[RMDB]
RNA sequence: GGGAACGACUCGAGUAGAGUCGAAAAAGCGCGUAUUCGCUUUGAUCACCGCUUCGAUCCGCGCCCGGGACGGCAACGAAUCAGCCGGUCUGAUUGACGCGCUGAGGUGGCUCGCGGCGAAUGUGCCAUGAAAUAGUUCGUUCGCGAACUAUUUCAUAAAAGAAACAACAACAACAAC
Reactivity to DMS in 0.01 (KOAc 150mM, MgCl2 10mM, bicine 150mM(pH8.5), 24C), signal-to-noise 5, nucleotides 027 to 126: a080g010c130g020c090g020u010a060u000u000c010g020c020u000u000u010g000a050u000c190a140c000c010g010c030u000u000c030g000a090u010c220c020g010c020g030c020c010c020g020g000g010a040c030g010g010c020a070a170c200g010a100a090u010c260a110g010c020c030g020g000u010c010u010g000a170u020u010g010a040c000g000c060g030c170u000g010a030g010g020u000g010g010c070u000c020g010c190g000g010c010g000a030a010u000g010u000g000c020c090
Reactivity to 2A3 in 0.01 (KOAc 150mM, MgCl2 10mM, bicine 150mM(pH8.5), 24C), signal-to-noise 3, nucleotides 027 to 126: a000g130c100g000c010g010u020a010u010u020c000g000c000u020u010u070g010a030u050c030a000c030c010g000c030u040u040c040g120a120u060c060c010g000c000g000c000c030c020g000g020g010a010c000g000g010c020a080a060c090g190a090a150u180c040a070g000c020c000g020g030u040c000u020g140a300u120u130g030a060c000g020c000g000c040u050g000a020g020g010u020g010g000c020u000c010g010c030g020g000c000g000a010a000u020g000u010g020c000c020

The record gives the reactivity of an RNA of 177 nucleotides to DMS and 2A3. For DMS the reverse transcriptase was MarathonRT. The reactions ran in a buffer of 150 mM KOAc, 10 mM MgCl2 and 150 mM bicine (pH 8.5), at 24 C. 2A3 adducts were read by reverse transcription with SuperScript II with manganese.